An RNA of 207 nucleotides, treated with DMS and 2A3 and read out base by base. Values cover nucleotides 27 to 156.
RNA sequence: GGGAACGACUCGAGUAGAGUCGAAAACUCGAGGAGCAUAGAGGCGUGCGAGCUCGACAUGAAUCAGCCUCGAUUAGAAGGUACUCGUGAGAGCGAAGUACCGAGAAUUGGUCGACGAUCACCGGCGAUCUUUCGACCUUGAAUUAAGCCGGUAAAACCGUGGUAUAUAUUUCGAUAUAUACCACGGAAAAGAAACAACAACAACAAC
Reactivity to DMS in 0.01 (KOAc 150mM, MgCl2 10mM, bicine 150mM(pH8.5), 24C), signal-to-noise 3, nucleotides 027 to 156: c070u000c020g020a070g000g010a210g030c060a100u000a070g020a090g050g030c010g050u000g040c020g020a120g030c040u030c010g060a060c050a140u020g010a130a150u020c050a110g000c020c000u000c000g000a170u010u000a120g000a180a150g000g000u010a020c000u000c000g030u020g000a300g010a260g000c000g000a050a030g010u010a020c000c000g000a070g010a120a090u040u020g020g010u000c020g010a050c300g010a080u000c060a090c040c030g030g000c020g000a050u000c040u010u000u000c050g010a040c020c070u010u010g010a070a140u000u000a080a160g010c000c000g030g000u010a060a050a140a230
Reactivity to 2A3 in 0.01 (KOAc 150mM, MgCl2 10mM, bicine 150mM(pH8.5), 24C), signal-to-noise 4, nucleotides 027 to 156: c020u020c020g000a020g020g040a040g020c030a060u070a110g010a010g010g010c010g010u020g000c010g030a090g240c010u000c010g060a060c050a160u290g150a120a100u120c060a080g000c000c000u010c000g020a060u090u130a070g090a080a030g010g010u000a000c010u010c010g020u020g000a080g000a010g020c030g000a100a030g010u000a000c000c010g000a010g030a010a140u190u150g000g000u000c010g000a000c010g000a000u000c020a030c070c000g000g010c000g000a000u000c000u030u200u020c020g000a010c000c000u020u080g020a010a020u150u060a050a020g000c000c000g010g030u020a020a080a000a010

DMS (dimethyl sulfate) methylates the pairing face of unpaired adenines and cytosines. 2A3 adducts were read by reverse transcription with SuperScript II with manganese. The RNA was probed in 150 mM KOAc, 10 mM MgCl2 and 150 mM bicine (pH 8.5) at 24 C.